[RMDB]
RNA sequence: GGGAACGACUCGAGUAGAGUCGAAAAAAAGGCUUAUCAAGAGAGGUGGAGGGACUUGCCCGAUGAAACCCGGCAGCCAGAAAUGGUGCCAAUUUCUGCAGCGGAAACGUUGAAAGAUGAGCCGAAACUACUAUUAGAUGUUCGCAUCUAAUAGUAGAAAAGAAACAACAACAACAAC
Reactivity to 2A3 in 0.01 (KOAc 150mM, MgCl2 10mM, bicine 150mM(pH8.5), 24C), signal-to-noise 1, nucleotides 027 to 126: a010a000a020g000g000c000u010u010a010u010c030a060a010g030a000g000a030g030g020u020g000g020a030g030g000g000a020c040u080u110g260c020c000c010g160a240u020g000a010a010a000c000c010c000g000g000c020a050g270c010c000a000g020a000a030a020u020g000g000u000g000c000c000a000a010u050u070u030c070u110g010c010a010g010c000g000g010a040a020a010c010g000u020u030g040a110a070a030g000a000u010g000a000g000c000c000g010a020a000a000
Reactivity to DMS in 0.01 (KOAc 150mM, MgCl2 10mM, bicine 150mM(pH8.5), 24C), signal-to-noise 4, nucleotides 027 to 126: a050a070a130g000g020c010u000u000a020u000c010a170a090g010a050g020a150g000g010u000g000g010a060g020g010g010a230c150u010u000g020c000c010c000g000a070u000g000a080a150a030c010c020c100g020g000c020a040g020c000c000a000g000a080a080a080u000g010g020u000g010c000c010a060a070u000u000u000c100u010g020c010a040g000c010g000g000a090a050a110c020g020u000u000g000a110a080a080g000a010u000g000a010g010c010c000g010a060a080a160